[RMDB]
RNA sequence: GGGAACGACUCGAGUAGAGUCGAAAAGUACCAUAUGUUCGCAUAUGGUACAAAACCUUUGUGCAGUUGUCAGCGACGUCUUUGGCCCAUUGGGCCAUGGACUAUCGCUUGGAUUUACUGCACUCUGGUAAAAGUAUGGUACCUUCGGGUACCAUACCGUAACACCAAGUUUCGACUUGGUGUUACGAAAAGAAACAACAACAACAAC
Reactivity to 2A3 in 0.01 (KOAc 150mM, MgCl2 10mM, bicine 150mM(pH8.5), 24C), signal-to-noise 4, nucleotides 027 to 156: g000u010a000c000c010a000u000a000u000g030u010u070c200g010c140a000u010a000u000g000g000u010a000c000a000a010a000a010c000c000u000u010u020g000u010g000c000a000g000u010u000g020u030c000a000g010c000g000a010c010g000u000c000u020u010u010g010g000c000c020c100a300u100u300g010g000g000c000c000a000u010g010g000a000c000u010a060u020c010g000c010u020u050g010g000a020u140u140u300a010c000u000g000c000a000c000u000c000u010g000g020u060a090a090a030a010g010u000a000u000g000g000u010a000c000c000u050u050c290g080g000g000u000a000c000c000a000u000a000c000
Reactivity to DMS in 0.01 (KOAc 150mM, MgCl2 10mM, bicine 150mM(pH8.5), 24C), signal-to-noise 2, nucleotides 027 to 156: g010u000a000c000c010a010u010a010u010g010u000u010c300g020c010a020u000a000u010g000g020u040a010c000a050a030a110a070c010c010u000u010u000g020u000g010c000a020g020u000u000g020u000c020a050g010c000g020a020c300g010u010c000u000u010u000g020g000c000c000c000a300u000u010g070g060g020c000c010a000u000g000g000a020c000u000a100u000c000g020c000u000u000g030g010a040u000u000u000a010c010u010g010c000a010c010u000c010u000g010g040u000a040a070a120a120g020u000a010u020g010g010u000a000c000c010u000u010c300g050g020g040u000a010c000c000a000u000a000c000

About this RNA
This 207-nucleotide RNA was probed chemically with 2A3 and DMS. For DMS the reverse transcriptase was MarathonRT. For 2A3, 11,845 sequencing reads were counted. For DMS, 8,169 sequencing reads were counted. For 2A3 the reverse transcriptase was SuperScript II with manganese. The reactions ran in a buffer of 150 mM KOAc, 10 mM MgCl2 and 150 mM bicine (pH 8.5), at 24 C.